The data come from the RNA Mapping Database (RMDB), library OK2TST.
Chemical mapping of a 177-nucleotide RNA with DMS and 2A3.
For DMS, 1,800 sequencing reads were counted.
DMS (dimethyl sulfate) methylates the pairing face of unpaired adenines and cytosines.
The reactions ran in a buffer of 150 mM KOAc, 10 mM MgCl2 and 150 mM bicine (pH 8.5), at 24 C.

RNA sequence: GGGAACGACUCGAGUAGAGUCGAAAACCUUACCACAUCAACUGAUUAAAGCAGUGACCAGCAGGAACUGCCCAGAGAACUGGCUGGCCUUGUUUCCUGAGUCUGAUCUGUUUGGCGGAGUGGGAGGCUUACGCUGGACAUUCGUGUCCAGCGUAAGAAAAGAAACAACAACAACAAC
Reactivity to DMS in 0.01 (KOAc 150mM, MgCl2 10mM, bicine 150mM(pH8.5), 24C), signal-to-noise 2, nucleotides 027 to 126: c000c000u000u010a220c020c010a010c010a090u000c070a100a080c010u000g000a120u010u010a090a080a090g010c030a030g010u000g000a060c080c050a050g020c020a040g000g000a030a140c020u000g000c300c010c020a020g010a090g000a100a170c140u000g000g010c020u010g000g000c060c060u010u000g000u000u000u000c030c020u000g010a190g010u000c000u000g010a080u010c000u000g000u000u000u000g000g020c300g000g010a060g030u010g000g010g020a020g020g000
Reactivity to 2A3 in 0.01 (KOAc 150mM, MgCl2 10mM, bicine 150mM(pH8.5), 24C), signal-to-noise 2, nucleotides 027 to 126: c000c010u050u170a160c000c030a000c000a130u070c030a060a120c030u100g080a170u160u200a240a040a020g050c000a000g020u020g070a070c000c020a020g070c010a020g020g010a030a020c010u020g030c030c010c010a010g020a010g030a230a110c070u070g190g000c010u000g010g000c010c010u120u130g060u080u080u050c010c010u040g020a050g060u000c010u050g020a070u070c010u010g060u060u010u070g080g030c070g030g010a040g010u030g000g030g040a020g050g000